[RMDB]
RNA sequence: GGGAACGACUCGAGUAGAGUCGAAAAGAUAUGGACUGCCAAACGCGAUAAGAUCCCAUCGGAAACGAUGGAAGAUCUUUUGACGCGUUGUGGCAGUCCUAAGUCAAAAGCGUUCUUCGGAACGCAACCAAUGGUAGGCCUUCGGGCCUACCAUUGGAAAAGAAACAACAACAACAAC
Reactivity to DMS in 0.01 (KOAc 150mM, MgCl2 10mM, bicine 150mM(pH8.5), 24C), signal-to-noise 1, nucleotides 027 to 126: g040a070u000a300u000g030g000a000c000u000g000c000c000a040a010a020c000g000c000g020a180u010a030a000g000a040u000c020c000c000a000u010c000g000g000a160a090a190c000g000a010u010g000g020a070a110g010a000u000c000u000u000u000u000g020a220c150g000c010g020u000u000g100u000g040g000c010a000g000u000c000c000u000a000a060g010u000c050a050a020a150a200g040c000g010u000u000c000u010u040c190g040g000a000a030c000g010c000a030a010

Structure probing data (DMS) for a 177-nucleotide construct. The DMS profile rests on 991 reads. Values cover nucleotides 27 to 126.